[RMDB]
RNA sequence: GGGAACGACUCGAGUAGAGUCGAAAAGUCUUGCCCAGGUUGGAGUGAGGUGGUGCAAACAAGGCUCACUGCAGCCUUGACCUUCGGGCUCAAGGAAUCCUUCCCCGUCAGCCUCCCCGGUAGCUAGAUAUUGAACCAAGUUCGCUUGGUUCAAUAUAAAAGAAACAACAACAACAAC
Reactivity to 2A3 in 0.01 (KOAc 150mM, MgCl2 10mM, bicine 150mM(pH8.5), 24C), signal-to-noise 3, nucleotides 027 to 126: g040u000c030u050u060g040c010c010c020a000g060g000u070u080g070g030a110g020u200g010a010g040g070u040g030g050u160g090c090a050a070a060c010a050a060g050g000c000u010c030a130c080u110g050c040a000g000c010c000u000u020g010a020c010c000u040u090c080g020g000g000c070u050c080a050a030g020g010a060a060u010c000c010u020u030c010c000c000c020g070u060c010a010g000c000c010u020c000c000c000c010g020g030u060a040g000c040u050a020g030
Reactivity to DMS in 0.01 (KOAc 150mM, MgCl2 10mM, bicine 150mM(pH8.5), 24C), signal-to-noise 7, nucleotides 027 to 126: g010u000c050u010u000g010c010c010c020a070g010g020u000u000g010g010a080g020u010g010a050g010g010u000g000g010u010g020c150a070a070a110c100a040a070g000g000c010u000c050a120c110u010g020c090a110g010c000c010u000u000g000a070c020c020u000u000c140g020g000g010c130u000c110a050a030g020g000a120a100u010c060c090u000u000c020c010c010c030g010u000c070a300g010c020c010u000c010c000c000c010g010g010u000a050g010c090u000a060g000